[RMDB]
RNA sequence: GGGAACGACUCGAGUAGAGUCGAAAAGCGGUCCCUGCUAGCCGGACACCGCUGGCAACCCGGCGCCAAGACGUGCGCGCAAGGGCGGGCGCCCGCGGGCGAGCAGCGUGACGCAGCGACGGCCCGCAUACACUACACGUUUCGACGUGUAGUGUAUAAAAGAAACAACAACAACAAC
Reactivity to 2A3 in 0.01 (KOAc 150mM, MgCl2 10mM, bicine 150mM(pH8.5), 24C), signal-to-noise 9, nucleotides 027 to 126: g020c010g000g020u020c010c010c000u000g030c020u020a060g040c050c040g100g010a060c060a040c070c040g000c000u000g010g000c020a090a240c010c000c000g010g000c010g000c010c010a120a050g210a180c120g110u140g070c080g000c020g000c120a220a300g060g010g010c290g030g030g000c040g010c000c010c010g020c000g010g000g000c010g020a020g010c010a000g020c020g120u150g020a020c070g000c200a040g000c020g050a080c040g090g020c000c000c000g000c010
Reactivity to DMS in 0.01 (KOAc 150mM, MgCl2 10mM, bicine 150mM(pH8.5), 24C), signal-to-noise 9, nucleotides 027 to 126: g000c010g000g000u000c010c010c030u020g010c030u000a060g020c050c090g000g000a140c180a090c190c020g010c010u000g000g010c060a130a170c010c000c010g000g000c000g020c010c030a170a130g020a160c230g010u030g010c090g010c010g010c050a040a130g000g000g010c110g000g000g010c300g010c020c030c080g010c020g010g000g020c020g010a090g000c010a030g010c070g010u030g010a080c030g000c010a030g010c000g000a110c200g000g000c010c000c000g010c060